[RMDB]
RNA sequence: GGGAACGACUCGAGUAGAGUCGAAAAAGUGGCGGAAGUGGGCAUCACUGGCCUGAACGCUGACUUCCUGCGCCAGCUGAAACGCAAAGGCUUUGCCGAUGCGCGCUUGGCAAAACUGGCGGGCGUAGCCCGAACGUAGGUUCGCCUACGUUCGGGCAAAAGAAACAACAACAACAAC
Reactivity to 2A3 in 0.01 (KOAc 150mM, MgCl2 10mM, bicine 150mM(pH8.5), 24C), signal-to-noise 3, nucleotides 027 to 126: a000g010u010g010g000c010g020g030a050a040g080u300g110g010g010c030a020u170c110a080c210u100g190g010c000c000u020g010a040a000c030g010c010u010g040a060c020u050u020c010c000u020g000c000g000c000c010a020g010c030u120g050a090a040a040c020g000c010a010a000a030g000g000c000u050u070u220g000c000c000g010a010u030g000c000g000c020g030c040u040u090g090g000c000a070a040a030a040c050u030g000g000c060g040g000g020c040g140u150a020
Reactivity to DMS in 0.01 (KOAc 150mM, MgCl2 10mM, bicine 150mM(pH8.5), 24C), signal-to-noise 5, nucleotides 027 to 126: a030g010u000g010g010c030g010g020a050a140g030u010g000g010g030c040a070u010c210a100c230u010g020g000c010c000u000g010a120a170c030g010c010u010g010a060c060u000u000c020c000u000g020c060g000c000c000a030g010c050u000g020a070a130a070c020g000c010a010a030a300g000g010c010u020u000u010g000c000c000g000a300u000g010c010g010c070g000c160u010u000g010g000c100a040a050a070a090c060u000g000g010c020g000g010g020c170g030u000a070